[RMDB]
RNA sequence: GGGAACGACUCGAGUAGAGUCGAAAACAUCCUAGCUUUACCAUGUUGUGAAACAAUCCAUUAAUUGUAAUAUUACGUUGAGCGCCUUGUUCAUCAAUGCUAUAAUUAGUUACAUAAUAAAUUGAACAAUAUCCUACGAUUUCGAUCGUAGGAUAUUAAAAGAAACAACAACAACAAC
Reactivity to 2A3 in 0.01 (KOAc 150mM, MgCl2 10mM, bicine 150mM(pH8.5), 24C), signal-to-noise 4, nucleotides 027 to 126: c040a040u040c000c000u000a070g040c070u210u170u100a100c010c030a090u130g000u010u040g000u070g010a110a050a000c000a000a070u030c010c090a040u030u090a030a110u150u010g010u030a010a030u020a080u100u070a060c120g010u010u030g040a020g050c050g070c010c100u060u140g030u070u060c020a030u010c010a040a040u040g000c020u060a030u070a190a050u120u070a030g030u000u060a020c020a000u120a090a000u070a050a280a040u050u060g020a010a000c010
Reactivity to DMS in 0.01 (KOAc 150mM, MgCl2 10mM, bicine 150mM(pH8.5), 24C), signal-to-noise 5, nucleotides 027 to 126: c240a090u010c020c020u000a080g010c080u010u020u010a080c110c100a070u000g010u000u010g020u000g000a090a060a060c060a050a050u010c090c080a050u000u000a060a050u010u000g000u000a020a040u000a030u020u000a050c120g000u010u000g020a050g000c040g010c140c090u010u000g010u010u010c030a040u010c040a020a030u010g010c100u000a050u030a040a060u000u000a050g000u000u010a060c030a030u010a060a060u010a050a080a100u010u010g000a070a170c120